[RMDB]
RNA sequence: GGGAACGACUCGAGUAGAGUCGAAAAACCUUAUUUUGAGAAGCUGAGGGAUUUGGCCCAUAGAAGCUUCAGCAACCGACUUUAAAGAGCACGGUGCUAAUACCAACGAGCAACUCGAAUGAUAAGUAAAACGUUGACAAGUUCGCUUGUCAACGAACUAUGAAAUUGUGUUCGCACAAUUUCAUAGAAAAGAAACAACAACAACAAC
Reactivity to 2A3 in 0.01 (KOAc 150mM, MgCl2 10mM, bicine 150mM(pH8.5), 24C), signal-to-noise 3, nucleotides 027 to 156: a010c050c000u110u110a210u020u140u110u100g080a040g000a020a000g000c010u030g010a010g000g020g020a050u000u030u070g030g000c000c000c000a060u160a120g030a020a000g000c000u000u010c020a000g000c000a000a030c000c000g040a000c010u070u120u300a140a210a050g050a010g000c030a020c030g000g020u010g000c000u000a030a020u040a070c000c000a030a060c060g050a020g070c060a070a100c060u030c070g060a080a080u080g070a050u080a120a020g060u090a040a100a050a040c000g010u000u000g000a020c000a000a000g010u030u100c230g050c180u010u000g000u000c000a000a010c000g000a010a000
Reactivity to DMS in 0.01 (KOAc 150mM, MgCl2 10mM, bicine 150mM(pH8.5), 24C), signal-to-noise 2, nucleotides 027 to 156: a090c050c000u000u000a120u010u000u010u020g030a130g010a060a300g000c120u020g010a140g000g000g000a130u010u010u010g020g000c000c000c000a190u000a170g010a150a050g000c000u000u000c020a020g030c000a050a060c020c000g010a070c020u000u000u000a070a220a230g000a060g000c000a020c030g010g010u000g000c000u000a050a090u000a040c050c020a060a130c100g030a160g030c030a110a210c030u010c050g000a070a060u000g020a120u000a040a080g010u000a040a060a080a130c000g010u000u000g010a010c000a030a040g000u010u000c300g000c040u010u000g000u000c000a000a000c000g000a000a070
An RNA of 207 nucleotides, treated with 2A3 and DMS and read out base by base. 2A3 adducts were read by reverse transcription with SuperScript II with manganese. The RNA was probed in 150 mM KOAc, 10 mM MgCl2 and 150 mM bicine (pH 8.5) at 24 C.